This 177-nucleotide RNA was probed chemically with DMS and 2A3.
The reactions ran in a buffer of 150 mM KOAc, 10 mM MgCl2 and 150 mM bicine (pH 8.5), at 24 C.
For 2A3 the reverse transcriptase was SuperScript II with manganese.
DMS (dimethyl sulfate) methylates the pairing face of unpaired adenines and cytosines.
Source: RMDB library M2PK50, as collected in RNAgym.

[RMDB]
RNA sequence: GGGAACGACUCGAGUAGAGUCGAAAAACCUAUGGAUUCGUCCAUAGGUGCUGGCGCGCGGCCUUUGUCCUGUCGCGUCUGCGUGGUGGGCGAUAUACGCGCAAUAGUGACAAUUCGUUGUCACUAAGUGAUGUCUGAAAUUCGUUUCAGACAUCACAAAAGAAACAACAACAACAAC
Reactivity to DMS in 0.01 (KOAc 150mM, MgCl2 10mM, bicine 150mM(pH8.5), 24C), signal-to-noise 4, nucleotides 027 to 126: a020c000c000u000a010u000g000g000a040u000u010c170g020u000c000c000a000u000a010g010g000u000g000c040u000g010g030c070g010c010g010c020g000g000c060c160u000u000u000g000u010c030c000u000g010u010c010g020c010g020u000c100u000g010c020g030u000g000g010u010g000g000g020c040g000a070u010a170u010a070c050g000c020g000c060a130a150u000a010g010u000g000a020c010a010a020u000u010c220g020u000u000g010u000c000a010c000u000a010a080
Reactivity to 2A3 in 0.01 (KOAc 150mM, MgCl2 10mM, bicine 150mM(pH8.5), 24C), signal-to-noise 4, nucleotides 027 to 126: a000c000c000u020a020u030g010g010a010u010u120c150g040u010c070c000a000u000a010g030g000u010g030c070u040g040g060c030g010c010g000c010g040g020c020c030u090u060u170g060u100c010c010u040g080u110c010g000c010g040u010c110u070g080c030g020u030g000g050u030g010g020g020c000g000a020u030a010u020a120c040g010c010g000c030a020a090u090a040g020u000g000a010c000a010a020u030u060c250g080u120u010g000u000c000a000c010u010a090a000